[RMDB]
RNA sequence: GGGAACGACUCGAGUAGAGUCGAAAAUAUCUAUGCAUACCAGCAUCCAUGGAGAUGCUAAUAACUAACCAUGCAGAUUGUUGCCAAAUGUUCCCUAAUUCUUGACCUUAAGGACUCUUUAGGAUCAGCAUUCUCUUAGCCACUUUGUGGCUCACUACGUCCAGUACUAGUUCGCUAGUACUGGACGAAAAGAAACAACAACAACAAC
Reactivity to DMS in 0.01 (KOAc 150mM, MgCl2 10mM, bicine 150mM(pH8.5), 24C), signal-to-noise 2, nucleotides 027 to 156: u010a090u000c070u020a090u030g020c020a070u000a110c070c030a100g010c010a020u000c040c010a210u000g020g050a110g030a040u000g020c010u000a030a060u010a070a150c100u000a070a130c050c060a070u000g010c030a060g030a150u000u000g020u010u010g000c000c090a040a110a100u000g000u000u000c020c010c020u030a070a100u000u000c070u000u000g020a050c050c010u010u010a040a080g030g000a090c120u020c080u000u000u000a060g000g020a040u010c010a050g000c070a070u000u010c060u000c000u000u000a020g010c020c000a030c000u010u000u020g060u000g000g020c010u000c040a030c040u000a110
Reactivity to 2A3 in 0.01 (KOAc 150mM, MgCl2 10mM, bicine 150mM(pH8.5), 24C), signal-to-noise 2, nucleotides 027 to 156: u110a000u000c040u090a120u060g000c010a030u010a150c070c050a050g010c000a000u000c010c010a160u260g130g020a240g000a050u000g020c000u020a060a100u170a160a060c110u040a020a050c070c030a020u050g000c010a000g030a060u060u120g110u060u130g010c100c060a030a080a090u160g010u020u030c000c000c000u000a010a110u070u030c020u050u090g040a050c010c010u040u040a020a010g110g040a110c030u100c080u240u090u070a000g010g000a200u110c010a000g030c020a060u150u000c090u000c000u060u050a020g000c000c000a040c020u110u120u300g040u020g000g000c010u030c000a000c010u090a020

This 207-nucleotide RNA was probed chemically with DMS and 2A3. Reactivities are given for positions 27 through 156. The 2A3 profile rests on 797 reads.